[RMDB]
RNA sequence: GGGAACGACUCGAGUAGAGUCGAAAAUAUCUUGCGCUGGGUAUGACGCUAAUCUAGAGACAUGCACGCUGAAGCGCGCACGGCGUGCAACAGCUCUAGGGAGUUAGCGCAUACCUGUGCUGAAGCGCGCACGGCAACCGAAAGGUGCGAACCAUUGCUAACAAAGUGACUUCGGUCACUUUGUUAGAAAAGAAACAACAACAACAAC
Reactivity to DMS in 0.01 (KOAc 150mM, MgCl2 10mM, bicine 150mM(pH8.5), 24C), signal-to-noise 1, nucleotides 027 to 156: u030a090u000c070u010u000g020c020g030c010u000g100g000g020u000a010u010g030a150c030g050c010u000a010a030u000c000u000a000g000a010g040a090c020a280u000g040c020a020c030g000c000u000g010a050a090g010c000g050c020g000c000a300c080g010g030c010g000u010g000c030a020a100c060a110g020c000u010c000u000a040g050g000g000a300g000u000u000a010g000c070g030c000a030u000a030c060c010u000g040u000g060c010u020g010a110a040g030c010g000c000g000c000a300c010g000g000c010a030a070c020c020g030a100a130a080g020g030u020g010c000g000a150a070c020c010a300u030u000g040
Reactivity to 2A3 in 0.01 (KOAc 150mM, MgCl2 10mM, bicine 150mM(pH8.5), 24C), signal-to-noise 3, nucleotides 027 to 156: u140a040u050c070u040u210g100c010g000c000u020g000g000g000u020a020u010g140a250c000g000c000u020a020a060u300c000u000a030g000a000g000a020c100a270u300g010c010a000c000g010c010u040g040a190a050g020c010g000c010g000c020a000c020g020g000c000g010u000g000c010a020a000c030a010g000c000u000c000u000a000g010g000g000a120g040u010u000a000g020c000g000c000a000u000a000c000c000u000g000u010g000c000u000g030a070a040g000c020g010c000g010c000a010c010g000g000c010a010a000c000c000g070a050a060a040g020g000u020g010c010g010a010a010c020c000a130u110u300g080

Chemical mapping of a 207-nucleotide RNA with DMS and 2A3. For 2A3, 3,068 sequencing reads were counted.